[RMDB]
RNA sequence: GGGAACGACUCGAGUAGAGUCGAAAAUUGCAGUUGGGUUGGUUAUUCCAACUACUCUUCACCUUCAUAUGAUAUUUCUUAGGGGAAUGUUAACUCUAGGAUGUACCCUUUAUAUCGUCUGGGCCACCUGCCGAUGGAGUUUCGACUCCAUCGGCAGAAAAGAAACAACAACAACAAC
Reactivity to 2A3 in 0.01 (KOAc 150mM, MgCl2 10mM, bicine 150mM(pH8.5), 24C), signal-to-noise 1, nucleotides 027 to 126: u110u030g050c010a000g000u160u030g010g050g000u000u000g040g040u100u170a070u300u030c000c000a000a000c000u010a030c110u070c000u000u130c000a020c010c000u060u020c020a050u090a020u230g040a000u110a080u040u000u000c000u000u100a000g000g030g070g050a080a080u190g040u300u160a100a120c050u000c000u030a010g040g040a000u030g060u130a050c000c000c000u000u000u000a140u020a050u050c000g000u020c130u020g000g000g130c080c000a000c000